Background:
This 207-nucleotide RNA was probed chemically with 2A3 and DMS. The reactions ran in a buffer of 150 mM KOAc, 10 mM MgCl2 and 150 mM bicine (pH 8.5), at 24 C. Source: RMDB library M2RFPK, as collected in RNAgym. 2A3 adducts were read by reverse transcription with SuperScript II with manganese. For 2A3, 2,827 sequencing reads were counted.
RNA sequence: GGGAACGACUCGAGUAGAGUCGAAAACGAGUGCAAUAAAGACGCGGUUGCCGAUCGGUAUGGAUGCCACCGUGACGGUUCAAUCACACAAGUGCCAACGAUAACGAGGCGCUCGCUAUUGCUGCGUAAAAGCGACGAUCGUUCGCGAUCGUCGCAAGAUCAAGACACAGUUCGCUGUGUCUUGAUCAAAAGAAACAACAACAACAAC
Reactivity to 2A3 in 0.01 (KOAc 150mM, MgCl2 10mM, bicine 150mM(pH8.5), 24C), signal-to-noise 3, nucleotides 027 to 156: c050g010a030g060u130g030c020a020a040u070a100a150a030g130a040c080g020c040g050g030u050u120g020c030c020g040a060u020c010g000g060u150a180u170g100g070a080u120g060c040c020a020c010c030g000u040g050a060c030g000g000u030u100c040a040a040u040c010a050c010a000c010a160a010g020u020g040c000c010a090a030c080g070a130u120a190a060c110g030a070g040g000c010g010c020u010c010g010c030u010a020u060u120g040c030u060g000c020g050u070a050a080a090a050g020c000g000a000c000g000a000u010c010g010u070u040c130g000c000g050a000u000c000g010u000c000g000c030a000a000
Reactivity to DMS in 0.01 (KOAc 150mM, MgCl2 10mM, bicine 150mM(pH8.5), 24C), signal-to-noise 1, nucleotides 027 to 156: c020g000a080g010u000g020c030a120a130u020a100a170a080g000a050c030g020c060g000g050u000u000g000c060c050g000a050u020c000g020g030u010a100u010g020g010a120u030g000c070c030a090c020c030g050u000g000a130c060g010g040u000u000c120a110a050u000c030a050c020a100c150a140a080g010u000g070c020c000a030a090c070g010a140u000a080a110c060g000a230g030g010c040g060c010u000c010g000c040u000a060u000u000g020c020u000g020c000g000u000a090a100a090a170g010c010g000a030c000g030a000u020c000g000u000u000c250g020c050g030a000u000c050g010u000c000g050c000a020a010